The record gives the reactivity of an RNA of 177 nucleotides to DMS and 2A3. DMS adducts were read by reverse transcription with MarathonRT. For 2A3 the reverse transcriptase was SuperScript II with manganese. The RNA was probed in 150 mM KOAc, 10 mM MgCl2 and 150 mM bicine (pH 8.5) at 24 C.

RNA sequence: GGGAACGACUCGAGUAGAGUCGAAAACUGGAAAAGGCAGGCCAAUUCCCCAAGCGGGUACAGCUGGGCCCGAACAGAGUGGGAUGGGUUGAGGACGAAGUGCUGGACUGGCUUCAGCAACGGCUGGUAGACUAAUCCUAUUCGUAGGAUUAGUCUAAAAAGAAACAACAACAACAAC
Reactivity to DMS in 0.01 (KOAc 150mM, MgCl2 10mM, bicine 150mM(pH8.5), 24C), signal-to-noise 9, nucleotides 027 to 126: c060u000g000g000a060a060a140a100g010g020c040a190g000g010c010c030a070a210u020u020c010c000c000c080a120a120g010c070g010g000g020u010a070c190a100g000c040u000g010g010g010c010c010c020g000a110a110c100a060g010a100g010u020g010g000g010a060u010g000g000g010u010u010g010a080g000g000a070c080g000a140a080g010u000g000c020u000g010g000a040c040u010g000g000c090u000u000c020a030g000c040a070a060c070g000g010c030u000g000g020
Reactivity to 2A3 in 0.01 (KOAc 150mM, MgCl2 10mM, bicine 150mM(pH8.5), 24C), signal-to-noise 9, nucleotides 027 to 126: c030u030g040g030a040a090a070a080g050g000c020a010g010g030c000c020a030a070u110u060c010c000c000c010a100a040g060c110g020g000g010u060a100c030a030g020c020u070g030g120g000c000c000c000g010a070a030c050a040g090a030g080u160g010g040g030a090u110g040g020g030u070u120g050a050g030g010a010c040g020a090a020g040u030g060c010u020g000g020a040c030u060g060g050c020u030u030c020a010g010c030a060a030c020g040g010c020u030g030g060